The data come from the RNA Mapping Database (RMDB), library OK1LIB.
An RNA of 177 nucleotides, treated with 2A3 and DMS and read out base by base.
The RNA was probed in 150 mM KOAc, 10 mM MgCl2 and 150 mM bicine (pH 8.5) at 24 C.
For DMS the reverse transcriptase was MarathonRT.
Values cover nucleotides 27 to 126.
Reactivities are rounded to 0.1 and cut off at 0 and 3.

RNA sequence: GGGAACGACUCGAGUAGAGUCGAAAAGAGAAACCUCACCUUAGGGGUAACAGGUCUGUUGAGGAGACCAGUGCAAGUCGGGGCAGUGGUAAGUAGAUUCGCCUUCAUUGGAGGCGGUAGAUUUAGCACUUCGAAGCAUAUUCGUAUGCUUCGAAGUAAAAGAAACAACAACAACAAC
Reactivity to 2A3 in 0.01 (KOAc 150mM, MgCl2 10mM, bicine 150mM(pH8.5), 24C), signal-to-noise 6, nucleotides 027 to 126: g120a010g050a060a080a010c020c010u030c010a100c020c040u080u140a070g020g020g010g010u020a030a020c030a050g030g020u020c020u020g120u140u150g110a060g070g030a020g010a010c010c010a000g020u050g030c050a040a020g030u040c010g030g000g000g020c020a020g020u030g030g030u040a080a040g020u040a030g030a130u070u100c010g020c000c000u020u030c030a210u050u300g050g010a010g000g000c000g000g000u020a030g010a040u070u070u090a070g000c040
Reactivity to DMS in 0.01 (KOAc 150mM, MgCl2 10mM, bicine 150mM(pH8.5), 24C), signal-to-noise 5, nucleotides 027 to 126: g020a140g000a140a120a060c010c010u000c060a150c130c110u000u020a110g000g010g000g000u020a060a130c150a130g000g010u010c040u000g010u010u000g000a110g010g000a060g000a060c040c040a060g010u000g010c070a090a050g010u000c030g010g010g010g030c050a040g030u010g010g000u000a020a060g000u020a060g010a070u000u020c000g000c000c000u010u000c050a170u020u040g000g000a030g000g010c000g020g030u030a030g010a070u030u020u020a070g010c120